Conditions: 150 mM KOAc, 10 mM MgCl2 and 150 mM bicine (pH 8.5), 24 C. This 207-nucleotide RNA was probed chemically with 2A3.
RNA sequence: GGGAACGACUCGAGUAGAGUCGAAAAGUCGGAACAUAACGACGGCGGGCCGGUGGGGAAUCAGGGGGCUACCGUGGGAUAGCGAUGAGACAGCCCCUCCGAUGGCACCAAGCGUCGGAUCACGGAAAACACUGUAAGCCCUUCGGGGCUUACAGAACAUUGUCUCAAAGUUCGCUUUGAGACAAUGAAAAGAAACAACAACAACAAC
Reactivity to 2A3 in 0.01 (KOAc 150mM, MgCl2 10mM, bicine 150mM(pH8.5), 24C), signal-to-noise 2, nucleotides 027 to 156: g040u040c020g090g020a200a080c050a120u270a130a030c020g000a000c010g020g050c130g020g000g000c040c030g030g000u130g010g000g010g050a040a130u120c020a130g090g000g000g010g010c010u050a050c010c010g070u060g010g070g030a090u070a030g020c020g060a090u080g020a050g010a040c030a010g010c020c010c020c010u030c010c010g010a030u060g100g000c050a060c020c050a100a030g030c020g050u120c100g010g010a020u090c020a020c030g040g000a030a010a010a040c060a030c000u000g000u000a010a000g000c000c000c000u000u020c100g010g000g000g000c000u000u000a000c000a000g000a000a000